The record gives the reactivity of an RNA of 170 nucleotides to 2A3 and DMS. Reactivities are given for positions 27 through 129.

[RMDB]
RNA sequence: GGGAACGACUCGAGUAGAGUCGAAAAUCUAGUGCCUUCUGGUUAUUCACCCACAUUCCAAUGGCGGGUUUGGUACGAAUGUAUAAUUUGUUAGCAUGCCUUUGGCUUUUACGCAAGUUUUAUCAGCAGACAAUCGUGUUCGCACGAUUGAAAAGAAACAACAACAACAAC
Reactivity to 2A3 in 0.01 (KOAc 150mM, MgCl2 10mM, bicine 150mM(pH8.5), 24C), signal-to-noise 9, nucleotides 027 to 129: u020c010u010a020g040u010g070c020c010u070u100c060u050g050g020u100u090a100u120u110c040a080c020c020c010a030c020a060u170u110c020c030a060a070u040g030g010c000g040g020g000u100u090u080g070g030u060a030c040g030a070a030u060g110u050a090u030a180a130u050u020u030g070u050u050a020g030c020a030u010g000c000c000u040u050u080g030g000c020u060u060u080u090a070c080g000c030a080a000g010u010u010u050u060a110u070c040a010g080c010a000g040a110
Reactivity to DMS in 0.01 (KOAc 150mM, MgCl2 10mM, bicine 150mM(pH8.5), 24C), signal-to-noise 9, nucleotides 027 to 129: u030c060u000a040g000u000g040c000c000u020u050c090u000g000g000u010u010a090u050u030c110a080c020c000c010a070c150a080u040u050c090c080a040a030u020g030g060c100g020g030g010u020u000u030g020g040u030a040c080g000a040a040u010g010u050a050u030a070a060u000u000u000g020u020u030a070g040c070a030u000g020c000c000u000u040u000g040g000c120u000u000u000u000a080c110g030c040a060a070g030u020u020u040u050a060u050c080a030g020c050a080g000a200